The record gives the reactivity of an RNA of 207 nucleotides to 2A3. For 2A3 the reverse transcriptase was SuperScript II with manganese.

RNA sequence: GGGAACGACUCGAGUAGAGUCGAAAACUAGGGAUGUUCGCAUCCCUAGAAAAAAACCUUUGUGGGUAGGGAGUCGAUACUGGACCCAUUGGGUCCAGGUAUAACGACGAGGAUCUACCCACUCUGGUAAAAAGCGUGAUUCUUCGGAAUCACGCAAGAGAGUCAUAUCGUUCGCGAUAUGACUCUCAAAAGAAACAACAACAACAAC
Reactivity to 2A3 in 0.01 (KOAc 150mM, MgCl2 10mM, bicine 150mM(pH8.5), 24C), signal-to-noise 1, nucleotides 027 to 156: c010u000a000g000g010g010a020u020g030u130u090c300g020c090a000u000c020c010c000u000a030g010a000a000a000a000a000a000a060c000c010u000u000u000g000u000g000g030g000u030a010g000g020g030a060g030u060c020g000a020u020a110c000u000g000g010a000c000c020c150a300u050u300g030g000g000u020c000c010a000g020g000u010a010u010a150a090c010g010a000c000g000a160g000g020a010u000c000u010a000c000c000c000a000c000u000c000u000g000g000u090a110a090a030a010a000g020c000g000u000g010a020u000u000c000u020u050c300g100g000a010a000u000c000a000c000g000c000a010a000